[RMDB]
RNA sequence: GGGAACGACUCGAGUAGAGUCGAAAAGGGUUACGGAAUAAUGUUACUCAUGGAACGACUACAUGCGCACGGAAGCGCGACGUGCGUCGGAAGCGCAAGACGACGCAUGUAGUUGGAAAUAAAGAAAGGGAAUAACAAACUUCGGUUUGUUAUUCCCAAAAGAAACAACAACAACAAC
Reactivity to 2A3 in 0.01 (KOAc 150mM, MgCl2 10mM, bicine 150mM(pH8.5), 24C), signal-to-noise 2, nucleotides 027 to 126: g060g000g040u060u180a010c060g040g110a050a140u270a100a040u140g000u000u040a000c020u000c050a130u130g060g200a150a080c050g000a000c000u000a000c000a000u040g000c010g000c030a090c270g000g040a000a040g000c000g080c000g070a020c000g100u280g040c130g040u070c050g140g080a030a000g040c000g000c000a000a070g130a050c000g000a000c000g010c000a000u000g000u000a000g000u000u000g000g020a010a010a010u260a040a070a000g110a060a010a000
Reactivity to DMS in 0.01 (KOAc 150mM, MgCl2 10mM, bicine 150mM(pH8.5), 24C), signal-to-noise 1, nucleotides 027 to 126: g040g000g010u000u000a010c150g000g080a270a030u010a000a050u000g040u000u000a000c000u020c000a120u010g000g000a190a070c000g000a050c030u050a000c000a000u000g000c050g000c190a090c010g000g000a050a140g000c000g000c010g000a240c000g000u000g050c150g000u000c020g060g020a090a210g000c000g000c010a060a090g040a250c000g000a300c000g000c000a000u020g060u000a000g000u000u010g000g000a000a090a080u010a040a070a120g000a060a040a100